[RMDB]
RNA sequence: GGGAACGACUCGAGUAGAGUCGAAAAGAUAUGGAAUCAUUAAGACAUGCUCCAGCGAUCGGAAACGAUCGUAUGGAGCAACAGCUUACUGUGAUUCCUAAGUCAAACGCGUUGUUCGCAACGCGAACCAGUACCGGGAGUUCGCUCCCGGUACUGGAAAAGAAACAACAACAACAAC
Reactivity to DMS in 0.01 (KOAc 150mM, MgCl2 10mM, bicine 150mM(pH8.5), 24C), signal-to-noise 1, nucleotides 027 to 126: g000a000u010a210u000g010g010a020a040u000c000a050u000u000a010a000g040a080c080a300u010g010c010u010c020c000a040g060c030g040a010u000c000g000g010a130a020a070c000g020a050u000c000g010u000a000u000g060g010a000g010c010a020a000c120a130g010c000u000u000a050c300u020g060u000g000a010u000u000c000c000u000a030a120g000u000c010a150a240a140c000g000c010g000u000u000g000u000u000c150g000c020a030a000c000g000c020g040a160a080
Reactivity to 2A3 in 0.01 (KOAc 150mM, MgCl2 10mM, bicine 150mM(pH8.5), 24C), signal-to-noise 1, nucleotides 027 to 126: g010a000u040a050u170g000g000a000a080u020c000a000u050u110a020a000g060a070c160a220u300g000c000u030c000c010a000g010c000g000a030u020c000g000g000a200a030a030c030g010a090u030c020g030u000a300u000g000g040a000g000c010a010a000c000a000g000c000u000u040a040c080u060g000u000g080a000u000u000c010c010u010a010a000g020u020c050a050a060a200c000g000c000g090u000u000g080u060u060c300g030c210a000a000c010g000c000g050a010a060
An RNA of 177 nucleotides, treated with DMS and 2A3 and read out base by base. It was measured as part of the RMDB library TTRDES. The DMS profile rests on 697 reads.